[RMDB]
RNA sequence: GGGAACGACUCGAGUAGAGUCGAAAACAGAGCUGAUGGGCCAUGUACCUAUCCAAAAUGAGAUCCCAUCUUGCACACUGGGCUAAUUUGAGAUUCUCAUGCCUCCUACUUGGAGAGAUCUGGACUACUAACUGUAUGACGUUCGCGUCAUACAGAACCCAUCUCAUCCCUUCGGGGAUGAGAUGGGAAAAGAAACAACAACAACAAC
Reactivity to 2A3 in 0.01 (KOAc 150mM, MgCl2 10mM, bicine 150mM(pH8.5), 24C), signal-to-noise 2, nucleotides 027 to 156: c010a040g030a020g020c050u080g020a010u040g010g010g000c040c040a060u100g040u100a100c000c030u130a100u100c050c030a070a070a010a120u100g010a060g010a160u070c000c000c000a000u000c000u040u130g010c040a060c000a030c220u110g020g000g090c030u100a080a080u110u050u090g040a030g030a010u140u000c000u010c010a020u080g020c020c010u030c000c000u100a250c120u140u160g000g040a050g020a000g010a060u000c030u050g000g050a010c030u080a030c020u070a300a130c000u030g010u010a000u000g000a000c000g000u030u000c130g070c000g120u020c000a000u000a000c000a000g000a000a000
About this RNA
The record gives the reactivity of an RNA of 207 nucleotides to 2A3.